[RMDB]
Record summary: This 177-nucleotide RNA was probed chemically with DMS and 2A3. Reactivities are rounded to 0.1 and cut off at 0 and 3. The 2A3 profile rests on 3,184 reads.
RNA sequence: GGGAACGACUCGAGUAGAGUCGAAAAAUGGCAGGCGAUUCUGAGAAAGACAUCGUUUGCCUCGGUGAGGCUGCUUAGCUGACUGUACUGCGACAGCGGCAGCAUGGUGUUUAGGAACUGGCUCCGAUACCUUUUAGUGGUUCGCCACUAAAAGGUAAAAAGAAACAACAACAACAAC
Reactivity to DMS in 0.01 (KOAc 150mM, MgCl2 10mM, bicine 150mM(pH8.5), 24C), signal-to-noise 6, nucleotides 027 to 126: a090u010g010g020c000a010g010g010c010g000a010u000u000c010u000g010a210g010a150a160a020g010a030c280a010u000c010g020u000u000u000g010c010c000u000c050g010g010u000g000a110g010g000c010u000g000c020u000u000a240g020c010u000g000a140c050u000g020u010a120c140u010g000c080g010a100c090a030g030c020g000g000c020a010g010c010a050u000g010g010u000g000u000u000u000a130g020g010a080a060c070u000g000g000c030u000c020c020g000a210
Reactivity to 2A3 in 0.01 (KOAc 150mM, MgCl2 10mM, bicine 150mM(pH8.5), 24C), signal-to-noise 3, nucleotides 027 to 126: a000u060g010g000c000a000g010g000c020g020a010u010u030c010u040g060a070g270a210a160a010g000a030c060a050u010c010g000u000u020u000g000c050c000u000c000g030g020u080g030a050g060g010c010u010g000c030u130u110a060g000c000u000g030a060c020u150g090u230a120c080u170g110c060g080a020c010a020g010c000g020g020c000a000g000c010a020u030g030g040u080g020u060u130u160a070g050g020a080a080c030u040g070g030c020u000c020c000g000a030